[RMDB]
RNA sequence: GGGAACGACUCGAGUAGAGUCGAAAAGAUAUGGAGACAGAAGAUCGAGGAUCUACACGGUCGGAAACGACCGGUAGGGAGAUCUCUGUCUCCUAAGUCAAAACUGCUGUGCUUCGGCACAGCAGAAGAAGAUUAAUCUGUUCGCAGAUUAAUCUUCAAAAGAAACAACAACAACAAC
Reactivity to DMS in 0.01 (KOAc 150mM, MgCl2 10mM, bicine 150mM(pH8.5), 24C), signal-to-noise 2, nucleotides 027 to 126: g010a020u000a000u010g000g010a010g010a030c000a000g000a040a040g020a010u000c000g010a110g010g000a000u000c010u000a000c010a190c010g020g010u000c000g040g010a000a000a000c000g010a010c000c000g000g000u000a010g000g000g010a000g000a010u000c010u000c000u000g000u000c000u000c000c010u000a000a030g000u000c000a090a110a150a240c000u000g010c000u000g000u000g020c010u000u030c280g010g010c000a010c000a000g010c000a000g000a040a120
Reactivity to 2A3 in 0.01 (KOAc 150mM, MgCl2 10mM, bicine 150mM(pH8.5), 24C), signal-to-noise 2, nucleotides 027 to 126: g000a010u020a000u030g020g000a010g000a010c000a020g060a100a020g000a080u010c020g080a300g110g010a020u010c010u000a000c300a060c090g000g020u010c000g000g030a000a000a000c000g000a000c000c000g010g010u000a000g000g000g000a030g010a000u000c000u000c000u010g000u000c000u000c000c000u000a000a010g000u000c000a000a010a080a160c010u010g000c020u000g000u000g010c000u100u100c300g180g000c000a000c030a000g000c000a000g000a000a020
Structure probing data (DMS and 2A3) for a 177-nucleotide construct. DMS adducts were read by reverse transcription with MarathonRT. The reactions ran in a buffer of 150 mM KOAc, 10 mM MgCl2 and 150 mM bicine (pH 8.5), at 24 C. As a SHAPE reagent, 2A3 marks flexible, mostly unpaired nucleotides at the ribose 2'-OH.